[RMDB]
RNA sequence: GGGAACGACUCGAGUAGAGUCGAAAACGGUGGGAUACUACCCUGGCUGUAUUGAAAUUCUAACCCGCACCCCUUAUCGGGGUGGGAGACAGUGUCAGGCAGGCAGUUUGACUGGGGCGGUCGCCUCAGGCAUUUGCAAUUUCGAUUGCAAAUGCCUAAAAGAAACAACAACAACAAC
Reactivity to 2A3 in 0.01 (KOAc 150mM, MgCl2 10mM, bicine 150mM(pH8.5), 24C), signal-to-noise 1, nucleotides 027 to 126: c000g020g030u050g030g020g000a010u070a220c070u010a030c000c040c020u010g100g020c010u000g000u050a140u110u080g050a000a000a150u120u060c090u080a140a100c000c010c030g080c060a060c000c050c020c010u060u240a190u300c150g000g000g000g000u000g000g050g020a010g000a000c030a000g030u030g010u160c010a000g010g050c000a000g060g080c020a000g000u100u100u090g090a060c040u040g010g000g020g030c000g110g090u170c160g050c000c030u060c000
Reactivity to DMS in 0.01 (KOAc 150mM, MgCl2 10mM, bicine 150mM(pH8.5), 24C), signal-to-noise 2, nucleotides 027 to 126: c090g000g050u010g000g000g000a150u000a060c070u010a060c160c020c000u000g020g000c020u000g010u020a050u010u000g000a070a090a100u010u010c080u020a160a260c090c000c020g010c040a050c000c000c000c010u000u020a110u030c250g010g000g000g120u010g010g010g020a060g000a050c140a040g000u010g000u010c020a030g000g020c020a010g020g010c080a030g000u000u000u000g010a190c070u010g020g000g010g030c020g020g010u010c170g000c010c050u020c040